[RMDB]
RNA sequence: GGGAACGACUCGAGUAGAGUCGAAAAGAUAUGGACCUCUACGAUUGGCCGAUGAAAUUGCUCGGAAACGAGCAAUGGAGGCUAGAGUAGAGGGUCCUAAGUCAAACUGAUGUCUUCGGACAUCAGAUCUACAUGGACGGUUCGCCGUCCAUGUAGAAAAAGAAACAACAACAACAAC
Reactivity to 2A3 in 0.01 (KOAc 150mM, MgCl2 10mM, bicine 150mM(pH8.5), 24C), signal-to-noise 1, nucleotides 027 to 126: g030a020u060a040u120g000g010a010c020c000u000c000u000a020c080g230a300u110u300g110g000c000c000g150a200u030g000a040a000a000u000u000g000c000u020c000g000g010a060a060a040c000g000a000g000c000a000a000u020g000g020a010g030g070c000u020a000g050a040g050u000a000g010a010g000g030g010u000c020c000u000a080a010g080u060c030a050a060a150c000u000g010a020u000g000u000c000u000u110c300g150g020a000c010a000u000c020a000g010a040
Reactivity to DMS in 0.01 (KOAc 150mM, MgCl2 10mM, bicine 150mM(pH8.5), 24C), signal-to-noise 2, nucleotides 027 to 126: g010a070u000a300u010g020g000a300c010c000u000c020u000a010c010g000a300u000u010g020g030c010c010g000a140u000g010a160a130a000u000u000g000c000u000c000g010g010a140a110a220c000g020a010g030c000a010a000u000g000g010a020g000g020c000u000a000g010a150g010u000a000g000a010g020g000g020u000c000c000u020a000a130g010u010c020a100a100a290c010u000g000a000u000g000u000c000u000u020c210g010g000a040c000a030u000c000a000g000a110
Conditions: 150 mM KOAc, 10 mM MgCl2 and 150 mM bicine (pH 8.5), 24 C. The record gives the reactivity of an RNA of 177 nucleotides to 2A3 and DMS. The data come from the RNA Mapping Database (RMDB), library TTRDES. For 2A3, 2,012 sequencing reads were counted.